[RMDB]
Record summary: Chemical mapping of a 177-nucleotide RNA with 2A3 and DMS. Source: RMDB library RFMREP, as collected in RNAgym. Reactivities are given for positions 27 through 126. The reactions ran in a buffer of 150 mM KOAc, 10 mM MgCl2 and 150 mM bicine (pH 8.5), at 24 C. 2A3 adducts were read by reverse transcription with SuperScript II with manganese. For DMS the reverse transcriptase was MarathonRT. The 2A3 profile rests on 3,858 reads.

RNA sequence: GGGAACGACUCGAGUAGAGUCGAAAAUACUCAGUACAACCAUUAACUGUUGUACGAUUAAUGUGAUUACACUUGUGUGAUCAAAGAAAGGGUAGAAAACUUGUCAGCUACUUCGGUAGCUGACAAGGAUUGUAGCACGGUUCGCCGUGCUACAAUCAAAAGAAACAACAACAACAAC
Reactivity to 2A3 in 0.01 (KOAc 150mM, MgCl2 10mM, bicine 150mM(pH8.5), 24C), signal-to-noise 3, nucleotides 027 to 126: u010a000c000u000c020a010g020u010a000c000a010a000c040c050a110u210u190a170a110c110u080g010u010u010g010u000a000c020g000a010u040u130a090a040u140g060u030g040a000u000u010a010c020a020c050u200u170g020u000g000u010g100a000u030c000a000a060a020g130a080a080a030g060g000g010u040a020g120a060a120a000a040c000u000u000g010u010c000a000g000c000u000a010c000u020u030c100g060g000u000a010g000c000u000g010a000c000a000a000g000
Reactivity to DMS in 0.01 (KOAc 150mM, MgCl2 10mM, bicine 150mM(pH8.5), 24C), signal-to-noise 3, nucleotides 027 to 126: u010a030c020u000c000a090g010u000a000c000a000a000c020c270a260u010u020a110a120c200u010g000u010u010g010u000a010c010g010a110u010u010a060a120u010g010u020g000a030u000u000a000c000a020c060u020u000g040u000g010u000g000a010u000c010a080a090a080g000a020a080a110g000g000g000u010a030g000a110a070a060a300c000u000u000g000u010c000a010g000c000u000a010c010u000u000c140g030g000u000a000g000c000u000g000a000c010a000a000g000